Annotation:
An RNA of 177 nucleotides, treated with DMS and 2A3 and read out base by base. 2A3 adducts were read by reverse transcription with SuperScript II with manganese. It was measured as part of the RMDB library M2PK50. In probing experiments dimethyl sulfate is read out at A N1 and C N3, which are open when not base-paired.
[RMDB]
RNA sequence: GGGAACGACUCGAGUAGAGUCGAAAAGCCUAACAGUUCGCUGUUAGGCAAAUGCACAGACUUCGCAACUGUCAAAAACACAACAGAAGUGUCUAUGCGAGGAUCGUUGCGUCUUCGGACGCAACAACUAUCAGAGCAAUUUCGAUUGCUCUGAUAGAAAAGAAACAACAACAACAAC
Reactivity to DMS in 0.01 (KOAc 150mM, MgCl2 10mM, bicine 150mM(pH8.5), 24C), signal-to-noise 6, nucleotides 027 to 126: g010c010c000u000a000a010c010a000g010u020u020c240g030c000u010g010u000u000a000g010g010c000a000a010a030u010g010c070a040c040a020g000a050c020u010u010c080g010c080a100a170c070u010g000u020c110a070a070a090a100a090c130a060c140a090a070c090a080g000a060a110g010u000g010u000c030u000a040u000g000c000g010a090g000g000a100u010c120g000u000u000g010c010g010u000c000u000u010c170g030g010a010c000g000c000a000a000c010a070a130
Reactivity to 2A3 in 0.01 (KOAc 150mM, MgCl2 10mM, bicine 150mM(pH8.5), 24C), signal-to-noise 8, nucleotides 027 to 126: g000c000c000u000a010a000c010a010g050u080u100c160g050c130u010g000u000u000a000g000g000c000a030a010a020u090g000c010a010c010a040g040a030c020u040u020c050g010c050a090a100c100u060g040u140c050a030a050a010a140a030c080a020c030a130a090c050a100g120a250a050g140u030g010u050c030u090a060u050g010c010g020a020g040g040a110u140c120g000u000u010g000c000g000u000c000u010u050c190g070g000a000c000g000c000a000a000c000a000a000
The RNA was probed in 150 mM KOAc, 10 mM MgCl2 and 150 mM bicine (pH 8.5) at 24 C. DMS adducts were read by reverse transcription with MarathonRT.